[RMDB]
RNA sequence: GGGAACGACUCGAGUAGAGUCGAAAAGAUAUGGAGUCUGGACAUGCUGUCAUUCGGAAACGAAUGGUCAGCAACAGCCAGCUCCUAAGUCAAAAGGUACUUGUUUUCUUCGGAAAACAAGUACCAACAUAUAACUGAAGUUCGCUUCAGUUAUAUGAAAAGAAACAACAACAACAAC
Reactivity to 2A3 in 0.01 (KOAc 150mM, MgCl2 10mM, bicine 150mM(pH8.5), 24C), signal-to-noise 5, nucleotides 027 to 126: g020a010u060a050u140g020g000a010g060u120c030u000g000g000a050c050a180u090g000c010u000g010u010c000a000u010u000c000g010g010a040a050a050c010g000a000a000u010g000g060u280c010a000g000c000a000a010c000a010g030c010c000a000g000c000u000c000c000u010a080a020g030u020c030a000a030a050a180g010g000u000a000c000u010u000g020u020u050u010u000c010u030u100c300g080g010a000a010a000a000c000a000a000g000u000a000c000c000a000a000
Reactivity to DMS in 0.01 (KOAc 150mM, MgCl2 10mM, bicine 150mM(pH8.5), 24C), signal-to-noise 8, nucleotides 027 to 126: g000a030u000a300u000g000g000a010g010u010c010u000g000g010a050c080a160u010g010c000u000g010u000c000a000u000u000c000g010g000a090a080a160c000g010a010a000u000g000g000u010c000a000g010c010a010a040c280a150g000c000c000a010g000c000u000c000c000u000a010a060g010u000c030a080a060a110a120g010g010u000a000c000u000u000g000u000u000u000u000c000u000u020c220g020g000a010a010a010a000c000a000a000g010u000a000c000c000a030a040
Structure probing data (2A3 and DMS) for a 177-nucleotide construct. Conditions: 150 mM KOAc, 10 mM MgCl2 and 150 mM bicine (pH 8.5), 24 C. Values cover nucleotides 27 to 126. In probing experiments dimethyl sulfate is read out at A N1 and C N3, which are open when not base-paired. The 2A3 profile rests on 24,721 reads. For 2A3 the reverse transcriptase was SuperScript II with manganese.